[RMDB]
RNA sequence: GGGAACGACUCGAGUAGAGUCGAAAAGUAUAGUUCGGACAGCUGCCAGGAACACAGAUAUCAAAGGCCUGAACCCUCUCACUUCCUAUGUUUUCCACGUGCGAGCCAGGACAGCAGCUGGCUAUGGCAUAACGUGCUCUUUCGAGAGCACGUUAUGAAAAGAAACAACAACAACAAC
Reactivity to 2A3 in 0.01 (KOAc 150mM, MgCl2 10mM, bicine 150mM(pH8.5), 24C), signal-to-noise 2, nucleotides 027 to 126: g020u020a020u130a240g070u060u110c060g040g020a030c020a020g000c000u040g010c010c020a050g000g090a130a010c080a020c040a050g080a100u100a020u200c100a090a120a030g040g000c000c010u020g030a070a050c000c070c000u050c010u000c010a040c010u070u060c040c000u010a070u160g050u050u070u020u010c040c020a060c090g020u070g070c050g030a040g000c010c010a030g000g030a040c030a040g000c010a010g030c030u000g020g000c000u090a080u120g080g000
Reactivity to DMS in 0.01 (KOAc 150mM, MgCl2 10mM, bicine 150mM(pH8.5), 24C), signal-to-noise 4, nucleotides 027 to 126: g000u000a060u000a080g010u000u010c080g000g020a140c050a070g010c020u010g030c030c050a090g020g010a080a060c080a100c090a080g010a110u000a090u010c100a070a090a070g010g000c060c040u010g010a070a080c070c010c030u000c030u000c040a050c110u000u000c010c010u000a070u010g000u000u000u000u000c020c030a090c200g010u000g010c070g010a060g010c040c020a050g000g020a070c020a080g000c040a130g010c010u000g000g010c020u010a030u010g020g000

The record gives the reactivity of an RNA of 177 nucleotides to 2A3 and DMS. The RNA was probed in 150 mM KOAc, 10 mM MgCl2 and 150 mM bicine (pH 8.5) at 24 C.